RNA sequence: GGGAACGACUCGAGUAGAGUCGAAAAGCCUUACGAUUCGUCGUAAGGCAUACAAACUUUUGGCACUAUGAGCCCGCAGCGUUGGUGCUCCCACGCGGUGCAAUACGACGGAUUUCGAUCCGUCGAAAACCAGCACAACAUUCGUGUUGUGCUGGUUAAAAGAAACAACAACAACAAC
Reactivity to 2A3 in 0.01 (KOAc 150mM, MgCl2 10mM, bicine 150mM(pH8.5), 24C), signal-to-noise 2, nucleotides 027 to 126: g000c000c000u000u010a000c000g010a010u030u070c160g050u000c010g010u160a010a010g000g000c000a000u040a010c010a000a110a020c000u020u080u140u180g060g000c030a020c070u100a090u240g060a030g000c010c010c020g040c040a100g060c040g080u110u120g030g020u120g060c050u120c000c010c000a010c010g020c060g000g000u060g000c020a020a090u170a140c000g000a010c000g000g010a010u090u000u080c080g060a010u010c020c000g010u000c000g000a000a000
Reactivity to DMS in 0.01 (KOAc 150mM, MgCl2 10mM, bicine 150mM(pH8.5), 24C), signal-to-noise 2, nucleotides 027 to 126: g000c000c000u010u010a010c000g010a000u000u020c240g020u000c000g020u000a000a010g000g010c010a010u000a020c160a090a080a110c190u010u000u010u010g030g010c000a020c120u000a110u010g000a080g000c050c010c040g020c080a120g000c030g030u000u000g010g000u030g020c190u000c070c020c020a070c030g000c030g030g030u000g000c070a040a080u000a210c020g000a010c000g000g000a020u000u000u000c210g010a010u000c000c000g000u010c000g000a010a040
The record gives the reactivity of an RNA of 177 nucleotides to 2A3 and DMS. The 2A3 profile rests on 2,493 reads. It was measured as part of the RMDB library M2PK50. Reactivities are rounded to 0.1 and cut off at 0 and 3.